[RMDB]
RNA sequence: GGGAACGACUCGAGUAGAGUCGAAAAGAUAUGGACCAUACCUCGCGAUAAGCUCUAGUCGGAAACGACUAAGAGCUUUUGACGCGACGUAUGGUCCUAAGUCAAAAUCACUUGUUCGCAAGUGAAAGAGUACUAAUUACUUCGGUAAUUAGUACUCAAAAGAAACAACAACAACAAC
Reactivity to DMS in 0.01 (KOAc 150mM, MgCl2 10mM, bicine 150mM(pH8.5), 24C), signal-to-noise 8, nucleotides 027 to 126: g000a030u000a220u010g000g000a010c000c000a010u000a000c000c090u000c000g040c000g020a200u010a020a020g000c000u000c000u000a020g010u000c000g010g000a060a040a090c010g010a020c000u000a020a070g010a010g010c000u000u000u000u000g020a160c140g020c000g020a000c240g000u000a000u000g000g000u000c000c000u000a000a050g000u000c020a100a090a100a160u000c000a010c000u000u000g000u010u010c250g030c020a010a010g010u000g000a020a090a130
Reactivity to 2A3 in 0.01 (KOAc 150mM, MgCl2 10mM, bicine 150mM(pH8.5), 24C), signal-to-noise 5, nucleotides 027 to 126: g010a000u020a010u070g010g010a000c000c000a000u000a010c030c100u010c000g010c040g220a110u080a300a010g010c000u000c000u010a020g000u000c010g000g000a070a010a020c000g000a010c010u020a070a070g000a000g020c010u020u020u020u020g000a010c120g010c010g000a000c000g010u000a010u000g020g010u000c000c000u000a000a000g000u000c010a000a000a000a130u040c000a000c010u020u010g050u160u110c300g000c150a010a010g000u000g030a070a080a010

Description: The record gives the reactivity of an RNA of 177 nucleotides to DMS and 2A3. It was measured as part of the RMDB library TTRDES. The reactions ran in a buffer of 150 mM KOAc, 10 mM MgCl2 and 150 mM bicine (pH 8.5), at 24 C. For DMS the reverse transcriptase was MarathonRT.